An RNA of 177 nucleotides, treated with DMS and 2A3 and read out base by base.
High 2A3 reactivity points to a flexible backbone, as in loops and unpaired stretches.
The data come from the RNA Mapping Database (RMDB), library M2PK50.
RNA sequence: GGGAACGACUCGAGUAGAGUCGAAAAAGACAUACGUUCGCGUAUGUCUGACGGGCACCUGACCCUAAGGAAAUGCUCUAAGACAGGACACACUGAUUGUGAUACCUCGAGAUUUCGAUCUCGAGAAGAGACGAGUGUUCUUCGGAACACUCGUCUCAAAAGAAACAACAACAACAAC
Reactivity to DMS in 0.01 (KOAc 150mM, MgCl2 10mM, bicine 150mM(pH8.5), 24C), signal-to-noise 1, nucleotides 027 to 126: a020g000a050c000a000u000a010c000g020u000u010c300g010c030g020u000a000u000g000u000c000u010g000a080c220g010g050g020c010a090c010c000u000g010a140c030c000c020u040a030a110g000g000a080a090a050u000g030c040u030c020u000a060a120g000a130c100a050g000g010a100c000a000c040a080c110u000g000a110u000u000g040u020g000a250u010a050c220c000u000c010g000a030g000a000u000u000u000c300g000a040u000c000u000c000g000a010g020a030a060
Reactivity to 2A3 in 0.01 (KOAc 150mM, MgCl2 10mM, bicine 150mM(pH8.5), 24C), signal-to-noise 1, nucleotides 027 to 126: a000g020a010c000a000u000a000c010g020u030u090c250g010c000g110u010a020u000g000u000c000u000g020a030c050g000g030g000c000a040c050c010u060g170a200c000c000c020u040a030a030g050g050a020a120a000u060g000c000u000c000u060a140a000g040a080c040a040g020g060a030c010a000c000a000c090u100g160a300u250u030g010u020g040a040u170a180c000c000u010c030g000a010g010a000u000u140u130c180g070a030u020c000u010c010g020a010g020a030a000